[RMDB]
Record summary
An RNA of 177 nucleotides, treated with 2A3 and DMS and read out base by base. Reactivities are given for positions 27 through 126. The reactions ran in a buffer of 150 mM KOAc, 10 mM MgCl2 and 150 mM bicine (pH 8.5), at 24 C.

RNA sequence: GGGAACGACUCGAGUAGAGUCGAAAAGAGAUUCAGGGAACAACAGAGCCACACGUCAGAAACUUCCGUCAGCCGGACCUCCGGCACUGUAACCCUUUACCUGCCGGUAUCCACAUCUGUGGAUACCAGGAUAAUGAAUCUUCGGAUUCAUUAUCCUAAAAGAAACAACAACAACAAC
Reactivity to 2A3 in 0.01 (KOAc 150mM, MgCl2 10mM, bicine 150mM(pH8.5), 24C), signal-to-noise 9, nucleotides 027 to 126: g060a000g010a010u070u070c030a020g020g010g050a080a070c030a040a010c010a070g040a030g060c020c010a040c010a010c070g080u050c030a030g090a120a110a050c030u100u030c030c010g050u050c040a020g030c030c000g040g030a120c010c020u110c020c020g000g000c010a010c000u010g000u020a020a050c010c000c000u020u040u090a080c020c020u050g090c050c030g000g000u000a000u010c010c000a010c010a130u170c190u300g000u000g000g000a000u000a000c000c000
Reactivity to DMS in 0.01 (KOAc 150mM, MgCl2 10mM, bicine 150mM(pH8.5), 24C), signal-to-noise 9, nucleotides 027 to 126: g010a100g010a080u000u010c060a050g000g010g000a070a080c120a080a070c050a040g000a080g010c030c020a050c100a080c130g000u010c070a100g000a090a090a080c090u000u010c030c030g010u010c070a110g000c070c040g000g010a140c150c230u020c110c050g000g000c010a040c040u010g000u020a090a080c020c010c010u010u020u010a070c030c030u010g010c080c060g000g010u000a000u000c000c000a000c010a190u030c200u050g010u000g000g000a000u000a000c000c000
It was measured as part of the RMDB libraries RFM100 and RFMREP.